Chemical mapping of a 177-nucleotide RNA with 2A3 and DMS.
Conditions: 150 mM KOAc, 10 mM MgCl2 and 150 mM bicine (pH 8.5), 24 C.
For DMS, 8,410 sequencing reads were counted.
Values cover nucleotides 27 to 126.

[RMDB]
RNA sequence: GGGAACGACUCGAGUAGAGUCGAAAAGAGUGGGGGCCAAGCGGAUGGAGGAACAUACGGCCCUUCGGUCGUGAUCGCUCCCGUCGAUAGCGUGUCCUCUGUGAGUUCACAGUCGGCAAGGUCAUCGGGUUAGUAGAUAGUUCGCUAUCUACUAACCAAAAGAAACAACAACAACAAC
Reactivity to 2A3 in 0.01 (KOAc 150mM, MgCl2 10mM, bicine 150mM(pH8.5), 24C), signal-to-noise 5, nucleotides 027 to 126: g150a020g060u210g010g000g000g010g010c010c000a020a000g010c010g020g010a010u040g010g010a020g000g020a040a010c030a090u300a110c120g080g000c000c000c000u000u020c030g010g000u010c000g010u020g010a060u110c020g000c020u020c000c000c000g020u020c010g010a030u060a030g050c050g010u040g010u040c000c000u000c020u000g020u010g030a280g100u280u300c020a010c010a010g030u030c030g010g000c010a020a040g090g010u110c020a030u060c060g050
Reactivity to DMS in 0.01 (KOAc 150mM, MgCl2 10mM, bicine 150mM(pH8.5), 24C), signal-to-noise 6, nucleotides 027 to 126: g010a110g020u000g010g010g000g010g010c030c020a090a290g010c030g000g000a040u000g010g010a040g010g000a080a100c090a130u010a110c190g010g010c130c000c080u000u000c040g010g010u010c010g020u000g000a060u000c240g010c020u000c010c010c010g010u010c030g000a040u000a060g020c030g010u000g000u000c010c020u000c010u010g020u010g000a230g010u010u010c020a030c010a030g020u000c230g010g000c010a060a050g010g000u000c030a050u000c060g010